[RMDB]
RNA sequence: GGGAACGACUCGAGUAGAGUCGAAAAUACGCAUGCCGGUGAGCGUGGUGCCUUCCUUUGGUCAAAUAAUUUGCGUUAUGGCUUUGUUCCAGAGGUAAUAACGGAUCCGAGGGCGCGCAGCGUGGAGGGAGUAUCGUCCGUUCGCGGACGAUACUCCAAAAGAAACAACAACAACAAC
Reactivity to 2A3 in 0.01 (KOAc 150mM, MgCl2 10mM, bicine 150mM(pH8.5), 24C), signal-to-noise 1, nucleotides 027 to 126: u060a000c130g070c000a060u130g150c090c010g050g200u220g090a070g000c000g000u010g020g000u040g000c000c070u000u080c000c000u000u010u000g000g000u170c140a000a180a000u200a210a220u250u170u090g020c030g070u150u170a060u060g030g000c000u150u050u160g040u170u030c040c000a000g040a000g000g000u120a090a000u000a200a010c100g000g000a000u040c000c060g040a050g020g000g000c030g000c030g000c030a000g030c010g000u020g020g010a130g140